Source: RMDB library 15KLIB, as collected in RNAgym.
An RNA of 170 nucleotides, treated with DMS and 2A3 and read out base by base.
For 2A3 the reverse transcriptase was SuperScript II with manganese.
Conditions: 150 mM KOAc, 10 mM MgCl2 and 150 mM bicine (pH 8.5), 24 C.
Values cover nucleotides 27 to 129.
RNA sequence: GGGAACGACUCGAGUAGAGUCGAAAAUGGACUCUUGGAAUGGGAAAGAGGAGGGCGGAAAAAGAGGAGCGGGCCUCCCGAUCCGAGGGGCCCGGUGGCCUGAUCUGGAGGGCACUCCGGGCCGUAAAAGCACGUUCGUUCGCGAACGUGAAAAGAAACAACAACAACAAC
Reactivity to DMS in 0.01 (KOAc 150mM, MgCl2 10mM, bicine 150mM(pH8.5), 24C), signal-to-noise 4, nucleotides 027 to 129: u060g000g020a060c070u070c010u060u040g020g020a080a110u000g010g040g020a020a040a040g020a030g020g030a000g020g000g100c150g000g000a040a040a040a090a020g010a070g040g000a080g030c000g070g030g000c110c000u020c000c030c050g000a090u030c050c050g030a100g000g010g030g030c010c010c030g000g020u000g000g000c020c010u000g020a140u070c120u010g030g040a250g020g040g000c080a000c000u050c010c010g040g010g050c010c040g030u000a030a030a070a110g050
Reactivity to 2A3 in 0.01 (KOAc 150mM, MgCl2 10mM, bicine 150mM(pH8.5), 24C), signal-to-noise 3, nucleotides 027 to 129: u090g040g060a020c010u000c010u070u090g030g040a060a020u090g020g010g030a030a050a080g040a020g010g000a000g000g030g000c010g040g000a090a020a000a000a000g050a070g010g020a030g020c030g010g020g020c000c020u060c010c020c000g010a040u040c030c030g020a020g000g000g000g000c000c000c000g000g000u000g030g000c000c000u050g020a120u080c040u070g070g080a090g020g010g060c060a080c100u000c000c030g010g000g000c000c010g000u010a040a100a000a000g040